[RMDB]
RNA sequence: GGGAACGACUCGAGUAGAGUCGAAAAAGCUGAUGCACGCGAUGGCCUUCUACCAGUGCUAUCGCAUCAGCUGUUCCCCUCUGGAGGUUUUAACCUUCACACUUCAAGGGCCUCGGUUUUCCGAUGGUCGCACAGCGCUGUUCGCAGCGCUGUGCGAAAAAGAAACAACAACAACAAC
Reactivity to DMS in 0.01 (KOAc 150mM, MgCl2 10mM, bicine 150mM(pH8.5), 24C), signal-to-noise 1, nucleotides 027 to 126: a020g000c000u000g000a000u000g000c070a150c170g030c150g030a000u000g000g000c020c000u000u040c210u070a120c280c170a000g020u020g000c060u000a070u000c000g030c000a030u000c000a000g000c000u000g020u000u000c070c000c000c290u000c110u000g000g060a020g000g010u080u000u100u030a100a090c010c000u110u000c000a110c190a080c260u000u000c170a210a000g000g000g010c000c000u000c000g010g000u040u040u020u080c040c030g020a090u010g060g000
Reactivity to 2A3 in 0.01 (KOAc 150mM, MgCl2 10mM, bicine 150mM(pH8.5), 24C), signal-to-noise 2, nucleotides 027 to 126: a010g000c000u000g010a030u000g050c060a030c130g170c030g060a000u000g010g010c000c040u160u070c040u170a080c100c100a020g040u070g160c000u000a000u010c010g000c020a000u000c000a000g000c000u000g000u000u000c000c010c000c000u000c000u000g000g000a000g030g030u000u040u110u180a150a090c000c000u000u000c020a020c010a010c030u300u090c130a070a180g050g010g050c020c000u000c010g040g010u180u080u060u160c000c010g040a060u160g060g000